[RMDB]
RNA sequence: GGGAACGACUCGAGUAGAGUCGAAAACGAUGAGGGGAGAAGAGAAGUGGACAGGUGGGUCGAAGACGCCCGCCCCAGGGCGUACGCCCGUCGCUUGUUUGCAUGCGGGGGUCAGACCCCCUUACCGAUUAAAUAGGUGGUUCGCCACCUAUUUAAUAAAAGAAACAACAACAACAAC
Reactivity to 2A3 in 0.01 (KOAc 150mM, MgCl2 10mM, bicine 150mM(pH8.5), 24C), signal-to-noise 3, nucleotides 027 to 126: c050g060a090u160g030a080g010g040g040g020a050g020a120a030g030a020g000a140a030g060u130g060g000a030c020a040g000g050u150g070g100g010u050c030g030a090a070g050a010c060g160c050c010c030g050c040c000c010c020a010g010g020g020c020g020u040a050c110g010c000c010c020g110u120c030g030c020u100u170g090u300u270u180g030c020a030u090g020c050g010g010g000g020g000u000c010a010g010a040c010c000c010c000c000u000u040a030c000c010g010
Reactivity to DMS in 0.01 (KOAc 150mM, MgCl2 10mM, bicine 150mM(pH8.5), 24C), signal-to-noise 7, nucleotides 027 to 126: c090g010a070u010g000a070g010g010g000g000a090g010a120a080g000a090g010a090a080g030u000g010g020a120c190a030g010g010u010g020g010g010u010c020g010a130a160g010a040c050g000c000c000c010g020c040c070c050c050a110g000g010g000c000g010u000a030c180g000c020c000c020g000u010c140g000c020u000u000g010u000u010u010g010c040a160u000g010c010g000g000g000g000g010u000c070a140g000a200c030c010c000c010c000u000u000a070c050c050g010